[RMDB]
RNA sequence: GGGAACGACUCGAGUAGAGUCGAAAAGGUCAUGCAGGGGCGUUUGGAGAUCUUCAAGCCAGGACAACCACCAGUAACGAUUUGUACGCAAGUACGAAUCUGAUACUGCAAAGACCGAACGCCGGUACUCCAUAACUUGGUUCGCCAAGUUAUGGAGAAAAGAAACAACAACAACAAC
Reactivity to 2A3 in 0.01 (KOAc 150mM, MgCl2 10mM, bicine 150mM(pH8.5), 24C), signal-to-noise 2, nucleotides 027 to 126: g020g020u040c030a030u190g000c050a030g100g000g090g000c030g000u000u050u040g080g020a170g020a130u060c010u040u060c110a120a080g040c040c070a030g000g040a030c020a050a060c040c010a060c020c000a000g020u040a040a000c020g000a000u010u020u010g000u010a000c020g040c070a130a050g010u000a000c000g010a000a000u010c020u050g020a020u020a080c010u020g030c040a050a080a050g030a030c010c000g020a040a020c040g020c090c010g050g030u090a060
Reactivity to DMS in 0.01 (KOAc 150mM, MgCl2 10mM, bicine 150mM(pH8.5), 24C), signal-to-noise 3, nucleotides 027 to 126: g010g010u000c030a080u010g040c100a090g000g000g010g030c030g010u000u010u000g000g020a130g000a050u000c050u000u000c060a060a120g020c070c080a050g000g000a060c090a050a080c040c040a120c250c000a020g010u000a010a170c080g000a020u000u000u000g000u010a010c010g000c300a070a150g000u000a000c000g000a000a000u000c000u010g040a040u010a020c000u000g010c160a070a100a070g020a070c020c000g010a050a030c070g000c020c000g030g020u010a100
This 177-nucleotide RNA was probed chemically with 2A3 and DMS. For DMS, 2,531 sequencing reads were counted. For DMS the reverse transcriptase was MarathonRT. For 2A3, 2,575 sequencing reads were counted.